[RMDB]
RNA sequence: GGGAACGACUCGAGUAGAGUCGAAAAUCUUGCCAUGUGUCUGAUGGGCUAAGUUCAGGAAAGAGACCGUGUUGCAAGGGGCUGGGGAAGCCAGUGUUGGCCUUAUACUUCCUGAAGGCAUUUUUAACGAUUUAGUCCACUUCGGUGGACUAAAUCGAAAAGAAACAACAACAACAAC
Reactivity to DMS in 0.01 (KOAc 150mM, MgCl2 10mM, bicine 150mM(pH8.5), 24C), signal-to-noise 1, nucleotides 027 to 126: u000c020u000u000g000c010c000a030u000g030u030g020u000c030u000g010a150u000g030g010g000c040u020a070a080g020u000u000c060a040g040g020a090a060a100g010a090g010a060c000c010g040u010g000u010u000g000c000a010a040g050g000g000g000c000u010g010g000g010g030a170a160g010c030c030a140g010u020g010u030u030g000g020c000c020u010u000a180u010a170c090u000u000c030c010u030g000a080a060g010g010c080a010u000u000u020u020u010a030a200
Chemical mapping of a 177-nucleotide RNA with DMS. The data come from the RNA Mapping Database (RMDB), library OK2TST. In probing experiments dimethyl sulfate is read out at A N1 and C N3, which are open when not base-paired. The RNA was probed in 150 mM KOAc, 10 mM MgCl2 and 150 mM bicine (pH 8.5) at 24 C. DMS adducts were read by reverse transcription with MarathonRT.